Source information: An RNA of 207 nucleotides, treated with 2A3 and DMS and read out base by base. The data come from the RNA Mapping Database (RMDB), library OK3TST. 2A3 adducts were read by reverse transcription with SuperScript II with manganese.

[RMDB]
RNA sequence: GGGAACGACUCGAGUAGAGUCGAAAACUCGCGCGAACAUUGAGGCGUGGAGCGCGACAUGAAUCAGCCUCUAUUAGAUUAAUGGUCGACAGAUCAGCGGCGAUCAGCGACCGAAUUAGAAGCCGCUACCGGAAGAGGAGACGCUCGACGGACGUCAGCAGUAAUAUCAUUUCGAUGAUAUUACUGCAAAAGAAACAACAACAACAAC
Reactivity to 2A3 in 0.01 (KOAc 150mM, MgCl2 10mM, bicine 150mM(pH8.5), 24C), signal-to-noise 5, nucleotides 027 to 156: c010u000c000g000c000g010c010g070a210a010c030a040u070u110g010a000g000g010c000g000u020g020g020a060g010c010g000c010g030a040c050a150u300g070a110a110u170c060a050g000c000c000u010c010u060a170u050u220a040g080a080u070u140a080a060u190g020g000u010c010g010a100c060a080g020a020u030c050a020g030c010g020g010c020g010a020u010c010a000g030c010g020a010c010c020g000a070a030u090u050a110g040a120a000g000c010c000g020c000u020a070c000c010g050g020a120a030g010a040g050g030a100g010a070c060g050c080u020c030g020a020c040g020g010a030c020g030u050c050a010
Reactivity to DMS in 0.01 (KOAc 150mM, MgCl2 10mM, bicine 150mM(pH8.5), 24C), signal-to-noise 2, nucleotides 027 to 156: c020u010c000g060c010g040c010g000a100a080c030a170u000u000g020a080g000g040c000g020u000g020g000a300g000c010g040c020g010a090c110a090u000g010a150a080u000c040a180g000c000c010u000c010u000a150u010u000a140g020a120u000u000a080a100u010g020g010u000c010g050a080c080a120g020a050u010c050a130g020c030g030g020c020g010a040u000c060a080g010c070g000a070c000c000g020a050a070u000u000a040g000a080a120g020c000c020g020c020u010a150c030c000g000g010a060a150g010a130g010g010a140g000a070c000g020c020u010c020g010a090c050g000g010a030c010g020u000c000a070